[RMDB]
RNA sequence: GGGAACGACUCGAGUAGAGUCGAAAACGUAUGCGAAGAAGGCCUUCAGGGACGGGGUGCGGAUGAUAGACCUCUUCGACGAUAAGUUCUUUUCCCGCCUCACCCCUCAGGAGAAGAGGUUCGUCGACGGUCAUGACUCAUUCGUGAGUCAUGACCGAAAAGAAACAACAACAACAAC
Reactivity to 2A3 in 0.01 (KOAc 150mM, MgCl2 10mM, bicine 150mM(pH8.5), 24C), signal-to-noise 1, nucleotides 027 to 126: c030g100u100a070u150g020c010g020a040a020g030a070a110g220g010c000c020u070u070c040a030g040g020g060a010c040g030g000g000g110u060g000c100g010g070a020u040g010a040u120a030g100a040c030c040u000c070u050u020c010g050a060c020g050a070u000a180a050g020u040u050c030u060u050u000u040c070c000c000g030c000c070u060c040a130c020c000c000c030u000c020a050g000g030a050g010a050a010g010a000g030g000u000u000c010g060u000c000g030a030
Reactivity to DMS in 0.01 (KOAc 150mM, MgCl2 10mM, bicine 150mM(pH8.5), 24C), signal-to-noise 1, nucleotides 027 to 126: c120g010u020a070u010g010c080g020a100a100g000a140a100g020g010c090c000u020u000c120a120g000g000g060a070c070g030g000g020g000u000g000c100g030g010a050u000g020a090u000a060g000a020c000c000u010c050u000u000c030g000a150c040g010a100u000a080a070g010u020u000c060u000u000u000u000c010c020c030g010c060c050u060c050a150c040c010c000c030u030c120a070g010g010a040g010a030a080g010a010g000g000u000u000c030g010u000c040g020a150